[RMDB]
RNA sequence: GGGAACGACUCGAGUAGAGUCGAAAACGAUAUGCAUUGAAAUAUUGCGUACUCAAUUAAUGCGUAUUAGUAUGCUCGUUGUACGCAAUAUUUACAUGAAAAUGACAAUUUAUUAUGACGAGCAUAAGGUAGUUGUAGUUUUCGAACUACGACUACCAAAAGAAACAACAACAACAAC
Reactivity to DMS in 0.01 (KOAc 150mM, MgCl2 10mM, bicine 150mM(pH8.5), 24C), signal-to-noise 6, nucleotides 027 to 126: c050g010a050u010a020u000g010c000a030u000u010g010a050a040a040u010a080u000u000g010c000g010u000a010c020u020c190a090a090u030u020a040a040u000g010c050g020u000a030u000u010a080g020u020a010u010g000c000u010c050g000u010u010g000u010a000c020g010c010a010a010u000a010u000u010u000a090c060a030u010g000a080a050a100a020u020g010a180c250a070a040u020u020u020a040u030u010a050u030g010a090c040g000a030g010c010a010u010a090a120
Reactivity to 2A3 in 0.01 (KOAc 150mM, MgCl2 10mM, bicine 150mM(pH8.5), 24C), signal-to-noise 9, nucleotides 027 to 126: c030g020a030u040a030u170g040c040a020u030u110g060a060a060a020u080a010u010u040g000c010g010u020a000c030u070c120a050a150u100u120a090a030u120g040c030g020u070a050u060u030a080g150u040a020u040g000c000u000c010g010u010u030g010u000a000c000g010c000a000a000u020a010u010u020u010a030c010a010u100g070a050a040a020a040u100g050a050c060a070a040u080u070u090a100u110u060a110u300g030a010c020g000a000g010c010a010u020a060a040